[RMDB]
RNA sequence: GGGAACGACUCGAGUAGAGUCGAAAAGUGGGCCACCGAGACCGCGACGACGGUGCAUGACGCCCUGGCGCUCAACCCGGCGGCCUACGGGCACGUCGAGGUGCGGGUGCCCGAGGUCUGGACUGGUCACAUGACGGUGCCGGUCGGCGACACGACGCCGCUUAGAAUUCUUCGGAAUUCUAAGCGGAAAAGAAACAACAACAACAAC
Reactivity to 2A3 in 0.01 (KOAc 150mM, MgCl2 10mM, bicine 150mM(pH8.5), 24C), signal-to-noise 3, nucleotides 027 to 156: g000u000g020g050g010c020c010a000c000c020g050a100g010a110c000c010g030c040g040a050c050g010a010c030g080g000u060g120c030a040u260g010a050c030g300c030c000c010u010g010g010c000g000c000u010c000a000a010c000c000c000g000g000c010g000g010c000c010u040a110c210g000g010g000c120a130c140g020u030c000g040a240g010g000u020g020c220g010g000g000u010g000c000c000c000g010a050g000g000u010c020u010g000g110a020c040u150g140g040u070c010a010c020a060u190g070a070c000g030g010u150g300c000c000g020g000u110c180g020g000c000g050a030c000a000c010g010a010c120g010

This 207-nucleotide RNA was probed chemically with 2A3. Conditions: 150 mM KOAc, 10 mM MgCl2 and 150 mM bicine (pH 8.5), 24 C. 2A3 adducts were read by reverse transcription with SuperScript II with manganese.